[RMDB]
RNA sequence: GGGAACGACUCGAGUAGAGUCGAAAACUGGUGGUCGGCGGGCUGGUCGGCGUCGUGUCCUGUUGGCGGGGGACGUGGUGGCUCGAGCGGGUCGCGCUCCUGCUGGUCGGCCUCGGCUGGGUCCUGCUGGUCCCGUCCGUGCUCGAGGUGCCGGUGCGAAAACGAAUUUAUUCGUAAAUUCGUUUUCAAAAGAAACAACAACAACAAC
Reactivity to 2A3 in 0.01 (KOAc 150mM, MgCl2 10mM, bicine 150mM(pH8.5), 24C), signal-to-noise 1, nucleotides 027 to 156: c040u050g080g000u110g060g050u040c000g000g010c040g000g000g000c010u010g030g020u020c040g000g080c050g000u040c020g000u000g120u080c020c030u150g050u210u160g050g000c080g010g000g030g000g000a040c030g060u130g080g130u100g040g020c010u010c040g120a100g060c170g060g000g020u110c000g010c000g030c030u000c000c000u000g040c020u080g040g010u020c030g010g000c010c000u000c020g000g000c000u110g090g000g040u010c010c000u080g080c020u020g030g020u040c060c010c000g030u000c030c000g090u200g000c020u050c060g130a100g050g090u070g010c000c000g000g030u010g010c010

An RNA of 207 nucleotides, treated with 2A3 and read out base by base. The reactions ran in a buffer of 150 mM KOAc, 10 mM MgCl2 and 150 mM bicine (pH 8.5), at 24 C. Source: RMDB library OK3TST, as collected in RNAgym. 2A3 adducts were read by reverse transcription with SuperScript II with manganese.